Structure probing data (2A3) for a 207-nucleotide construct. The 2A3 profile rests on 854 reads. Values cover nucleotides 27 to 156.
RNA sequence: GGGAACGACUCGAGUAGAGUCGAAAAGGGGUCGCACGAUAAGGAUACAGGGAGCAUCGAUCUAUACUGAAGCCUCCACGGUAUAGGGAGCUCCCUUGAUCCUUUUGACGUGCGACGGAGGCACCCAAAGUGAGCAGCGUUUCGACGCUGCUCACAAACAAACUGACACGUUCGCGUGUCAGUUUGUAAAAGAAACAACAACAACAAC
Reactivity to 2A3 in 0.01 (KOAc 150mM, MgCl2 10mM, bicine 150mM(pH8.5), 24C), signal-to-noise 1, nucleotides 027 to 156: g000g070g130g000u020c000g000c000a030c000g120a220u290a300a000g000g000a000u020a230c000a000g020g000g000a000g000c020a000u300c050g000a000u000c000u000a000u000a000c000u000g050a200a020g030c000c000u000c000c000a000c000g000g000u020a000u000a000g000g000g000a000g000c000u010c000c000c000u000u050g000a000u010c000c000u030u000u010u200g080a020c030g000u000g030c000g000a000c000g010g000a000g000g000c000a050c000c010c000a020a060a000g010u000g000a000g000c000a000g080c000g000u110u060u280c300g050a020c000g000c000u030g000c000u000c000a000c020a010a000